[RMDB]
RNA sequence: GGGAACGACUCGAGUAGAGUCGAAAAACGAGGUCGUGCCUACUACGGUAGGCACGGCCUCGAAUUACGUUCAUCUACUUAAUCGUAGACGCAUCAAUACAUCAUUCAUGGAACGGGGGAUGGUGAAACUAGAAUCAAACGUUCGCGUUUGAUUCAAGGAUAACAUGUGGUUCGCCACAUGUUAUCCAAAAGAAACAACAACAACAAC
Reactivity to DMS in 0.01 (KOAc 150mM, MgCl2 10mM, bicine 150mM(pH8.5), 24C), signal-to-noise 1, nucleotides 027 to 156: a210c020g000a000g040g020u000c020g010u000g000c000c000u000a030c020u150a060c280g110g020u000a000g010g020c000a000c060g000g000c000c000u000c000g010a020a020u000u000a070c060g000u000u000c020a300u010c000u040a020c000u020u000a130a120u010c300g010u000a040g010a000c040g010c040a140u000c020a130a140u010a070c010a060u010c000a030u000u010c040a090u000g000g000a070a100c110g010g000g000g030g000a070u010g020g090u000g040a120a070a050c080u010a220g010a010a010u000c000a000a000a000c030g040u000u000c300g030c000g020u000u010u000g030a030u000u000c020a010a130
Reactivity to 2A3 in 0.01 (KOAc 150mM, MgCl2 10mM, bicine 150mM(pH8.5), 24C), signal-to-noise 3, nucleotides 027 to 156: a000c010g000a000g010g000u000c010g000u000g000c010c010u030a010c010u060a020c200g110g000u020a000g040g020c000a000c010g000g000c000c000u000c000g000a000a000u000u020a000c000g000u000u000c000a000u000c010u010a000c000u040u160a080a050u190c060g000u010a010g020a020c000g010c030a110u180c080a070a100u130a230c000a020u000c000a010u000u030c000a010u020g070g020a010a000c000g010g000g000g000g000a000u000g000g020u010g030a060a020a010c070u060a100g000a000a000u000c000a000a000a000c010g030u070u050c260g000c020g120u000u020u000g000a000u000u000c000a010a020

Chemical mapping of a 207-nucleotide RNA with DMS and 2A3. The RNA was probed in 150 mM KOAc, 10 mM MgCl2 and 150 mM bicine (pH 8.5) at 24 C. Values cover nucleotides 27 to 156. It was measured as part of the RMDB library M2RFPK. The DMS profile rests on 1,795 reads. For 2A3, 2,658 sequencing reads were counted.